[RMDB]
RNA sequence: GGGAACGACUCGAGUAGAGUCGAAAAGAUAUGGAAGACUAGGGACAUGCUGAACUGUCGGAAACGACAGAGCAGCAACAGCCCUAGGUCUUCCUAAGUCAAAAGUCCCCCUGUUCGCAGGGGGACAGGCCUAUUACAAGUUCGCUUGUAAUAGGCCAAAAGAAACAACAACAACAAC
Reactivity to DMS in 0.01 (KOAc 150mM, MgCl2 10mM, bicine 150mM(pH8.5), 24C), signal-to-noise 2, nucleotides 027 to 126: g010a040u000a220u000g000g010a010a000g000a040c000u000a010g020g010g030a030c110a130u000g010c000u000g000a020a020c010u010g010u000c000g010g000a030a020a100c000g030a020c000a010g000a070g050c000a020g010c000a040a060c300a130g000c000c000c000u000a020g020g020u000c000u000u010c000c010u000a000a080g000u000c030a110a120a200a140g010u010c020c000c010c000c010u010g020u000u020c260g070c010a010g000g000g000g010g000a000c010a010
Reactivity to 2A3 in 0.01 (KOAc 150mM, MgCl2 10mM, bicine 150mM(pH8.5), 24C), signal-to-noise 2, nucleotides 027 to 126: g010a010u030a020u030g000g010a000a000g020a020c020u010a010g050g010g020a100c110a240u300g000c010u010g000a040a030c000u000g010u000c000g010g030a040a010a020c000g000a010c000a000g000a010g040c010a000g000c010a050a010c060a080g040c010c000c020u010a000g020g000u020c010u000u000c000c020u000a020a000g000u000c020a070a130a060a090g000u010c010c010c000c000c000u030g070u080u060c300g020c140a000g000g000g020g000g000a000c000a000